[RMDB]
RNA sequence: GGGAACGACUCGAGUAGAGUCGAAAAGAGUCAUACAACCCCAGAAACCAUUCCUUAUACCUUGAGUAUUGCUGAAUUCAGUUUAGCGUGCAUGCUCUUGGCUAUUCUCAUAGUGAUUGUCACAUUUAAAACGACGAUGACUUCGGUCAUCGUCGAAGUGAAAUGUCAUGUUCGCAUGACAUUUCACAAAAGAAACAACAACAACAAC
Reactivity to 2A3 in 0.01 (KOAc 150mM, MgCl2 10mM, bicine 150mM(pH8.5), 24C), signal-to-noise 4, nucleotides 027 to 156: g010a000g060u070c060a010u080a170c040a070a080c010c000c010c030a030g100a080a040a020c050c030a090u110u120c000c030u150u060a040u060a090c000c010u010u040g010a000g000u010a020u170u140g000c020u020g040a100a090u240u120c010a060g190u070u130u150a040g040c080g040u090g010c010a000u020g000c000u000c000u000u010g000g000c000u060a040u080u020c090u030c080a100u120a090g050u050g070a190u090u120g070u170c020a030c010a090u080u140u120a110a140a040a020c000g010a000c000g000a000u000g000a000c000u020u040c150g060g000u000c010a000u000c000g000u010c000g000a010a000
Reactivity to DMS in 0.01 (KOAc 150mM, MgCl2 10mM, bicine 150mM(pH8.5), 24C), signal-to-noise 1, nucleotides 027 to 156: g030a070g020u010c080a170u000a100c040a080a090c050c020c030c010a150g000a140a110a080c030c050a150u010u010c000c020u000u030a130u000a030c000c010u000u010g000a060g020u000a010u000u030g040c020u000g020a090a090u000u000c220a160g040u010u000u010a080g000c020g000u000g050c090a220u000g000c000u000c000u000u010g000g000c070u000a100u000u000c030u000c040a130u000a050g010u010g000a110u000u010g000u000c060a110c110a130u000u000u000a080a060a180a170c010g010a010c000g030a010u010g010a020c000u010u020c300g050g000u000c010a000u000c030g020u000c000g010a000a050
This 207-nucleotide RNA was probed chemically with 2A3 and DMS.
The RNA was probed in 150 mM KOAc, 10 mM MgCl2 and 150 mM bicine (pH 8.5) at 24 C.
2A3 adducts were read by reverse transcription with SuperScript II with manganese.
For DMS the reverse transcriptase was MarathonRT.